[RMDB]
RNA sequence: GGGAACGACUCGAGUAGAGUCGAAAAAUCAAGUAUCAAUGGUUCGUUGUUACGACGAUCGUCUGUUUCUACGAUCCUUCGCCCUGCUAGUGAAUCAUCGUAUCCUAACUCGAACUCUGAAACUAUUACCUACGAUAUAGAUGAUAACGUAAACCCACUGAUUUAUCGCGUUCGCGCGAUAAAUCAGAAAAGAAACAACAACAACAAC
Reactivity to 2A3 in 0.01 (KOAc 150mM, MgCl2 10mM, bicine 150mM(pH8.5), 24C), signal-to-noise 1, nucleotides 027 to 156: a000u050c010a000a000g090u080a030u020c040a000a130u120g020g010u040u160c130g010u000u090g020u000u000a050c130g060a080c200g040a070u040c110g040u010c050u090g010u040u000u090c010u040a040c020g010a010u050c030c040u020u070c050g010c030c000c000u000g030c010u150a040g000u010g170a150a030u030c000a000u000c010g000u030a030u050c020c020u040a000a030c010u040c050g070a000a040c070u100c000u100g030a090a030a000c020u080a160u080u190a080c090c040u060a090c120g050a030u020a000u060a230g050a120u080g020a000u020a010a040c050g020u000a080a000a080c000c000c010a000
Notes:
This 207-nucleotide RNA was probed chemically with 2A3. The 2A3 profile rests on 469 reads.